[RMDB]
RNA sequence: GGGAACGACUCGAGUAGAGUCGAAAAGAUAUGGAUCCAUAUGGAGACUAUGUAUCGGAAACGAUAUGCAUAGUCUAUGAAGUAUGGAGUCCUAAGUCAAAUCGAAAUGACUUCGGUCAUUUCGAAAUCUGGAUAAGUUGUUCGCAACUUAUCCAGAAAAAGAAACAACAACAACAAC
Reactivity to DMS in 0.01 (KOAc 150mM, MgCl2 10mM, bicine 150mM(pH8.5), 24C), signal-to-noise 2, nucleotides 027 to 126: g000a020u000a010u010g000g010a060u000c000c000a000u000a020u000g000g000a020g010a000c000u010a010u000g000u000a010u000c000g010g000a010a000a010c000g000a010u000a100u020g000c060a010u000a000g010u000c000u000a220u030g000a080a210g000u000a010u000g000g000a060g010u010c000c000u000a010a110g000u000c010a070a130a140u010c000g000a000a010a000u000g000a020c000u000u010c190g020g000u000c000a000u010u000u000c000g010a010a050a040
Reactivity to 2A3 in 0.01 (KOAc 150mM, MgCl2 10mM, bicine 150mM(pH8.5), 24C), signal-to-noise 2, nucleotides 027 to 126: g010a010u000a010u030g000g000a000u000c000c000a000u000a010u010g000g010a010g010a010c010u010a010u080g000u000a020u000c010g000g000a000a010a000c000g000a000u040a060u120g010c010a030u030a020g020u000c010u040a260u010g000a000a000g020u010a000u020g010g010a030g120u090c010c000u000a000a010g010u000c020a040a040a170u050c000g000a000a000a000u000g000a000c010u030u030c220g070g000u000c000a000u000u000u010c000g000a020a000a020